[RMDB]
RNA sequence: GGGAACGACUCGAGUAGAGUCGAAAAGAUAUGGAUUCAUGCGAAGCUUGGUCUCGUUGAAAGGACGGCACUCGGAAACGAGUGCCGUCCUGGAGAGACCCAAGCGAAGUAUAUGAAUCCUAAGUCAUCUUAACAUGUACUUCGGUACAUGUUAAGAAAAAGAAACAACAACAACAAC
Reactivity to DMS in 0.01 (KOAc 150mM, MgCl2 10mM, bicine 150mM(pH8.5), 24C), signal-to-noise 1, nucleotides 027 to 126: g020a030u010a300u010g010g010a010u000u010c010a090u020g010c000g040a110a300g000c000u010u010g010g000u010c000u000c000g010u010u010g020a230a090a090g040g030a020c010g030g010c030a020c000u030c010g040g010a080a130a190c020g000a070g040u000g010c020c000g020u000c010c010u000g000g010a090g010a000g020a000c230c070c080a000a000g010c010g000a090a300g010u000a070u000a090u000g000a040a010u000c010c000u000a030a110g000u010c030a100
The record gives the reactivity of an RNA of 177 nucleotides to DMS. The data come from the RNA Mapping Database (RMDB), library TTRINS. Values cover nucleotides 27 to 126. The reactions ran in a buffer of 150 mM KOAc, 10 mM MgCl2 and 150 mM bicine (pH 8.5), at 24 C.